RNA sequence: GGGAACGACUCGAGUAGAGUCGAAAACACUUGUAGUCCCAGCUUCUCAGUAGGCUAAGGUGGGAAGAAUCACCUGAGUCCCUGAGGUCAAGGCUGCAGUGAGCCGAGAUUACACCACUGGACAUCAUAUGAACUAAGGGUUCGCCCUUAGUUCAUAAAAAGAAACAACAACAACAAC
Reactivity to DMS in 0.01 (KOAc 150mM, MgCl2 10mM, bicine 150mM(pH8.5), 24C), signal-to-noise 6, nucleotides 027 to 126: c050a030c060u020u010g010u000a030g020u000c000c010c030a170g000c090u050u020c020u000c010a010g000u010a220g010g000c000u000a070a010g010g020u000g000g000g000a170a100g020a160a110u030c000a010c000c010u010g000a040g000u020c000c200c010u000g000a010g000g010u040c060a190a230g000g010c010u010g010c030a020g010u010g000a080g030c020c010g010a130g010a060u020u010a050c180a080c070c040a040c050u000g000g000a080c130a100u020c130a140
Reactivity to 2A3 in 0.01 (KOAc 150mM, MgCl2 10mM, bicine 150mM(pH8.5), 24C), signal-to-noise 7, nucleotides 027 to 126: c050a010c030u070u130g030u060a010g060u060c010c000c000a000g020c020u190u090c010u000c020a060g010u110a070g010g010c010u030a030a010g010g000u010g000g010g050a230a230g070a170a130u170c000a000c000c000u000g030a000g010u030c020c010c000u010g000a000g010g010u040c020a040a040g000g000c000u010g000c000a010g000u020g030a010g030c000c020g020a020g010a050u070u130a040c040a050c070c020a020c050u040g030g040a020c020a090u130c030a030